[RMDB]
RNA sequence: GGGAACGACUCGAGUAGAGUCGAAAAGUGAGGAAAGUACCAAACAGCAGCGGAGUUUUAAACUUUAAAUAGACAGGUCUGAGUGCCUGAACUUGCCUUUUCAUUUUACUUCAUCCUCCAAGGAGUUCCUGUCUCAUCGAUUCGUCGAUGAGACAGGAAAAGAAACAACAACAACAAC
Reactivity to 2A3 in 0.01 (KOAc 150mM, MgCl2 10mM, bicine 150mM(pH8.5), 24C), signal-to-noise 1, nucleotides 027 to 126: g100u100g000a030g000g000a000a000a100g080u010a060c010c000a000a090a000c010a000g030c000a010g000c010g060g070a050g000u010u030u040u100a070a000a000c000u040u000u110a050a040a180u080a000g090a050c010a010g020g000u050c060u170g300a010g050u120g010c010c000u020g000a000a000c040u000u150g040c010c000u020u050u050u070c010a100u140u110u000u210a000c000u010u030c030a100u010c000c020u020c000c000a000a070g060g010a010g070u020u010
An RNA of 177 nucleotides, treated with 2A3 and read out base by base. For 2A3, 703 sequencing reads were counted. It was measured as part of the RMDB library RFM100.